RNA sequence: GGGAACGACUCGAGUAGAGUCGAAAAGCGUCGAGCCAGCGCCGCACCGUGCGCGUGGCCACCUUCCGCUGCGCUGCGAACGCGUCGAUCGAGAUCAUGGACGUGGCCGGGCGCUUGGCCGGCUCGGCCUCUGAACAGAGUUCGCUCUGUUCAGAGGAAAAGAAACAACAACAACAAC
Reactivity to 2A3 in 0.01 (KOAc 150mM, MgCl2 10mM, bicine 150mM(pH8.5), 24C), signal-to-noise 9, nucleotides 027 to 126: g080c040g040u020c010g020a010g000c010c010a100g000c070g010c120c000g050c040a140c040c060g070u080g020c030g000c190g200u010g000g000c000c000a020c000c040u110u040c020c020g000c050u060g000c010g000c020u110g050c060g060a080a020c090g000c010g050u050c050g040a120u080c070g050a040g020a280u140c060a100u180g050g010a020c030g010u010g010g000c020c020g020g050g000c010g000c000u030u100g010g000c000c000g000g000c000u000c000g010g000
Reactivity to DMS in 0.01 (KOAc 150mM, MgCl2 10mM, bicine 150mM(pH8.5), 24C), signal-to-noise 9, nucleotides 027 to 126: g010c170g020u000c010g010a030g020c010c010a100g030c130g020c030c030g010c180a210c110c090g010u000g020c020g010c010g010u000g010g000c000c020a020c060c100u000u000c020c040g010c120u000g010c020g000c010u000g020c150g010a090a150c080g010c020g010u000c080g000a070u010c130g000a150g010a100u010c110a140u000g000g010a050c300g010u000g000g010c020c010g000g000g010c020g010c020u000u000g010g010c050c040g000g010c010u000c010g010g010
This 177-nucleotide RNA was probed chemically with 2A3 and DMS.
Values are in units of 0.01, from 0 to 300, in steps of 10.
For 2A3 the reverse transcriptase was SuperScript II with manganese.
The data come from the RNA Mapping Database (RMDB), library OK2TST.
The DMS profile rests on 29,283 reads.
DMS adducts were read by reverse transcription with MarathonRT.